This 177-nucleotide RNA was probed chemically with DMS. Conditions: 150 mM KOAc, 10 mM MgCl2 and 150 mM bicine (pH 8.5), 24 C. Source: RMDB library OK2TST, as collected in RNAgym. For DMS the reverse transcriptase was MarathonRT.
[RMDB]
RNA sequence: GGGAACGACUCGAGUAGAGUCGAAAACGGGGAAAGCAGCCAAACCUCUGAUCGCCCGGACAAUGUCAUCAUCACCCUGAAGAGGGCCAAGGGUCCGCUGGUUUUCGACCUGGGCAUCUGCCUGGUGCCCUCUUGCUGGAUUCGUCCAGCAAGAGGGAAAAGAAACAACAACAACAAC
Reactivity to DMS in 0.01 (KOAc 150mM, MgCl2 10mM, bicine 150mM(pH8.5), 24C), signal-to-noise 1, nucleotides 027 to 126: c060g040g030g020g020a060a100a100g010c040a060g000c060c050a090a110a170c040c040u020c040u000g000a060u000c100g030c000c000c020g030g020a060c140a040a100u000g010u000c040a050u010c040a050u000c050a170c040c050c020u000g000a130a090g000a110g020g000g020c040c050a070a120g020g000g030u000c050c160g020c030u000g010g020u000u000u000u000c060g010a070c050c000u000g020g000g030c040a090u000c130u010g010c100c050u010g010g000u000g010